[RMDB]
RNA sequence: GGGAACGACUCGAGUAGAGUCGAAAAGAUAUGGACGAUAACUGAACUACGAUGUUGAUCGGAAACGAUCAAUUUGUAUCGCAGUAUCGUCCUAAGUCAAACAAAUGACACUUCGGUGUCAUUUGAACCACCAUGCGUGGUUCGCCACGCAUGGUGGAAAAGAAACAACAACAACAAC
Reactivity to 2A3 in 0.01 (KOAc 150mM, MgCl2 10mM, bicine 150mM(pH8.5), 24C), signal-to-noise 1, nucleotides 027 to 126: g020a020u020a030u040g000g000a000c010g010a000u070a300a300c100u020g070a090a140c160u220a160c300g020a010u100g000u090u010g000a020u000c000g000g000a010a000a050c010g040a000u010c000a000a000u040u060u160g260u110a230u290c160g080c080a000g020u000a000u000c010g010u000c000c000u000a000a000g020u000c010a090a000a150c000a020a000a000u000g000a000c000a000c000u050u100c300g180g010u000g000u000c000a010u010u000u000g000a010a030

Conditions: 150 mM KOAc, 10 mM MgCl2 and 150 mM bicine (pH 8.5), 24 C. This 177-nucleotide RNA was probed chemically with 2A3. Reactivities are given for positions 27 through 126. For 2A3 the reverse transcriptase was SuperScript II with manganese. The data come from the RNA Mapping Database (RMDB), library TTRDES. Values are in units of 0.01, from 0 to 300, in steps of 10.